[RMDB]
RNA sequence: GGGAACGACUCGAGUAGAGUCGAAAACUCUUCGUCUCCCGAGGCGGAGAGAGUAUCCGACGUCAGUUGGGUAAGCAGAACACCAUCAUUAGGGGAGAUGGUGGACCCACUCUUCCCUCAUGAAAAUGUGGGUUGAGUGCGUCAAACUACCCCGCAGGGAUCGUGUUGUGUUCGCAUAACACGGUUCAAAAGAAACAACAACAACAAC
Reactivity to DMS in 0.01 (KOAc 150mM, MgCl2 10mM, bicine 150mM(pH8.5), 24C), signal-to-noise 3, nucleotides 027 to 156: c010u000c010u000u000c020g010u000c010u000c050c080c110g020a070g020g020c000g010g010a020g010a120g000a070g000u000a010u000c020c010g040a050c020g020u000c160a080g030u000u000g010g000g010u000a010a060g030c060a080g010a090a080c030a060c000c040a050u010c030a090u000u000a080g020g010g000g020a160g010a020u000g010g010u000g000g000a010c020c010c010a010c020u000c000u000u000c010c000c010u010c070a070u000g010a240a160a260a080u050g050u020g020g000g010u000u000g000a100g050u010g040c210g010u000c040a090a100a030c030u010a080c000c000c020c000g000c000a000g000